[RMDB]
Structure probing data (DMS and 2A3) for a 207-nucleotide construct. The reactions ran in a buffer of 150 mM KOAc, 10 mM MgCl2 and 150 mM bicine (pH 8.5), at 24 C. The data come from the RNA Mapping Database (RMDB), library OK3TST. For 2A3 the reverse transcriptase was SuperScript II with manganese.
RNA sequence: GGGAACGACUCGAGUAGAGUCGAAAACACCUUUGGGACCCUUAAGCUCUUGGUCCGUAAGUGGUUAAACUCGAAGGGAAGGGUUUAAUAAGGUUUACCACUCUUUAAUGUCUUCGUCUGUACAUGGAAGGGAGGAUGUUCCAGAGGGUAUUAAGGGCUAGAUAUAGACUUUCGAGUUUGUGUCUAGAAAAGAAACAACAACAACAAC
Reactivity to DMS in 0.01 (KOAc 150mM, MgCl2 10mM, bicine 150mM(pH8.5), 24C), signal-to-noise 4, nucleotides 027 to 156: c040a090c010c010u000u000u020g020g010g020a080c000c010c020u000u010a050a090g010c020u000c020u000u010g010g010u000c040c020g040u000a050a060g020u000g020g010u010u010a050a050a050c010u000c020g010a130a100g030g020g010a200a120g000g020g020u000u000u010a040a080u000a090a090g020g010u010u000u000a060c010c010a080c020u010c020u000u000u000a070a050u000g010u010c030u000u000c080g020u010c060u000g020u020a100c080a100u000g030g020a060a060g000g010g020a080g030g020a080u000g010u000u000c020c040a110g010a040g010g010g020u000a060u000u000a050a060g000g000g020
Reactivity to 2A3 in 0.01 (KOAc 150mM, MgCl2 10mM, bicine 150mM(pH8.5), 24C), signal-to-noise 5, nucleotides 027 to 156: c040a030c000c000u040u060u020g030g010g020a020c010c000c000u020u020a030a000g010c000u010c010u040u050g040g030u030c000c010g020u070a050a030g020u020g030g050u040u120a030a030a010c020u020c060g030a060a040g060g010g030a010a020g020g000g000u010u030u030a040a040u080a030a020g030g000u030u030u060a030c000c000a020c000u020c010u000u040u030a050a010u030g010u000c010u040u030c030g130u010c050u050g060u060a040c010a050u060g050g020a010a010g050g030g000a010g010g010a030u070g000u050u020c010c000a020g010a020g100g010g000u040a140u060u090a040a030g010g010g010